[RMDB]
Chemical mapping of a 177-nucleotide RNA with DMS.
It was measured as part of the RMDB library M2PK90.
For DMS the reverse transcriptase was MarathonRT.
The reactions ran in a buffer of 150 mM KOAc, 10 mM MgCl2 and 150 mM bicine (pH 8.5), at 24 C.

RNA sequence: GGGAACGACUCGAGUAGAGUCGAAAAUUACUAGUCUGUGAUGAAUUGCUUUGACUUCUGACACCUCGUAUGAAAACUGCACGUGCAGUCUGAUUAUUUAGCAAGACUGAGGCUUAAUAUAAAUCAAGACCUGAUACUGUUUCGACAGUAUCAGGUCAAAAGAAACAACAACAACAAC
Reactivity to DMS in 0.01 (KOAc 150mM, MgCl2 10mM, bicine 150mM(pH8.5), 24C), signal-to-noise 1, nucleotides 027 to 126: u000u000a090c100u000a120g030u050c030u000g000u000g000a050u020g010a090a060u020u000g010c030u010u000u000g000a090c030u000u000c040u000g020a070c070a050c040c030u020c130g000u010a030u020g010a110a050a090a070c080u000g000c010a070c190g000u020g000c010a030g030u000c010u020g000a050u000u000a100u000u000u000a030g010c050a030a050g000a060c100u000g000a030g000g000c000u000u000a030a020u000a070u010a060a050a060u010c160a120a120